[RMDB]
This 177-nucleotide RNA was probed chemically with 2A3. The reactions ran in a buffer of 150 mM KOAc, 10 mM MgCl2 and 150 mM bicine (pH 8.5), at 24 C. Source: RMDB library OK2TRN, as collected in RNAgym.

RNA sequence: GGGAACGACUCGAGUAGAGUCGAAAACUAAUACGAUUAAGGUUGCUUCACCAAUGGUUUUUACUACUUCAUUGAUUGAACUGUUGAUCGCAAUAGUUUUGUCAUACAUUAUCUCUGCUUCCAUAGAGCUAGCAGUCGUGUUCGCACGACUGCUAGCAAAAGAAACAACAACAACAAC
Reactivity to 2A3 in 0.01 (KOAc 150mM, MgCl2 10mM, bicine 150mM(pH8.5), 24C), signal-to-noise 1, nucleotides 027 to 126: c000u020a000a050u090a060c010g000a000u020u010a070a000g220g030u150u090g090c070u020u040c040a010c040c040a020a010u010g050g060u010u000u080u160u130a230c180u030a000c000u080u120c020a040u000u000g120a100u000u040g010a030a010c000u080g030u100u070g110a060u080c000g060c050a040a010u010a040g000u000u000u000u090g060u060c000a090u170a180c010a070u100u260a180u150c070u010c000u060g010c010u020u000c020c000a030u030a060g200a010